[RMDB]
RNA sequence: GGGAACGACUCGAGUAGAGUCGAAAACGCUGAUUUCAGUGGCUGGCGAGUAUGCGGCGGAGCUGGCAAACCAGGCGCUGGAUCGCAACCUCAACGUGAUGAUGUUCUCCGAUAACGUCACGCUGGAGUUCACGAGGGAAUUCGUUCCCUCGUGAACAAAAGAAACAACAACAACAAC
Reactivity to DMS in 0.01 (KOAc 150mM, MgCl2 10mM, bicine 150mM(pH8.5), 24C), signal-to-noise 2, nucleotides 027 to 126: c220g010c030u020g070a020u000u000u000c010a030g010u000g000g020c000u010g000g000c050g000a300g000u000a060u000g010c000g010g010c090g030g030a130g010c030u010g000g010c050a030a200a100c030c010a020g000g010c020g010c020u000g000g000a040u000c000g040c050a120a120c030c030u000c010a030a040c020g000u000g030a020u000g000a100u000g000u000u000c060u040c180c110g010a100u010a070a080c030g010u000c010a000c030g030c020u000g000g010a210
Reactivity to 2A3 in 0.01 (KOAc 150mM, MgCl2 10mM, bicine 150mM(pH8.5), 24C), signal-to-noise 1, nucleotides 027 to 126: c090g000c090u170g020a050u010u150u210c010a020g020u010g130g090c000u000g000g000c030g010a050g060u140a040u170g040c020g000g030c130g200g080a170g010c040u050g130g000c020a000a000a000c010c000a020g040g000c010g000c010u010g010g010a000u000c000g020c010a020a090c010c000u030c040a010a020c010g020u020g000a090u000g020a050u100g100u090u040c250u020c090c070g000a070u080a180a040c000g010u000c010a000c010g000c020u020g060g020a100
This 177-nucleotide RNA was probed chemically with DMS and 2A3. High DMS reactivity at an A or C suggests that its Watson-Crick edge is free. The RNA was probed in 150 mM KOAc, 10 mM MgCl2 and 150 mM bicine (pH 8.5) at 24 C. For DMS, 1,707 sequencing reads were counted. Values cover nucleotides 27 to 126. 2A3 adducts were read by reverse transcription with SuperScript II with manganese.